Chemical mapping of a 177-nucleotide RNA with DMS.
Reactivities are given for positions 27 through 126.
It was measured as part of the RMDB library TTRINS.
For DMS the reverse transcriptase was MarathonRT.
[RMDB]
RNA sequence: GGGAACGACUCGAGUAGAGUCGAAAAGAUAUGGAGUACGGUAAGCAACCUUAGCUUUUGACGCUCGCGUGUCGGAAACGACACUGAAUGAGCGAUAAGCUAAGGUUGCUUACCAUACUCCUAAGUCGAGAUGAUGAUGGUUCGCCAUCAUCAUCUCAAAAGAAACAACAACAACAAC
Reactivity to DMS in 0.01 (KOAc 150mM, MgCl2 10mM, bicine 150mM(pH8.5), 24C), signal-to-noise 1, nucleotides 027 to 126: g020a110u020a300u020g040g000a010g010u000a000c170g010g050u000a000a000g020c000a030a000c020c000u020u020a000g030c020u000u000u010u000g040a200c120g030c000u000c000g010c180g000u000g000u000c010g000g010a120a090a260c020g020a020c020a000c020u000g000a040a130u010g000a050g030c000g070a030u000a010a020g040c010u020a000a000g000g000u000u000g020c000u010u000a000c000c000a010u000a000c010u010c010c000u010a010a050g020u010c110